RNA sequence: GGGAACGACUCGAGUAGAGUCGAAAACAAAUGGGACUCAACAUAAAGAUACUGUUCAAAACGUUAAUUUGUCAGUUUCUAAGAGUACAGGUCAACACACUACUUCUGUGACUUCAGAAUACUAUAGCGUGUAAUCAAAGUUCGCUUUGAUUACACGAAAAGAAACAACAACAACAAC
Reactivity to DMS in 0.01 (KOAc 150mM, MgCl2 10mM, bicine 150mM(pH8.5), 24C), signal-to-noise 5, nucleotides 027 to 126: c040a050a120a120u030g010g000g030a050c020u000c010a140a110c180a100u020a080a170a030g000a020u000a020c000u010g000u040u010c060a010a000a020a080c260g020u010u070a060a130u010u000u000g000u000c040a030g000u010u000u000c000u000a100a110g000a050g020u010a030c080a080g010g000u010c050a040a030c100a030c120a090c070u010a070c100u010u000c020u020g010u010g000a060c060u000u030c030a030g010a070a060u020a110c130u000a050u040a040g000
Reactivity to 2A3 in 0.01 (KOAc 150mM, MgCl2 10mM, bicine 150mM(pH8.5), 24C), signal-to-noise 9, nucleotides 027 to 126: c050a010a110a060u170g060g020g050a020c030u030c040a040a090c040a160u230a130a230a010g010a010u030a010c000u020g070u150u070c010a010a020a040a030c090g110u210u200a180a150u200u030u010g010u010c000a010g010u030u020u000c040u050a130a040g020a010g030u060a040c030a030g020g050u060c030a120a010c030a020c020a020c090u200a060c040u090u050c020u010g080u070g130a080c000u080u040c070a030g050a100a070u120a150c080u090a050u110a130g100

Conditions: 150 mM KOAc, 10 mM MgCl2 and 150 mM bicine (pH 8.5), 24 C.
Chemical mapping of a 177-nucleotide RNA with DMS and 2A3.
DMS (dimethyl sulfate) methylates the pairing face of unpaired adenines and cytosines.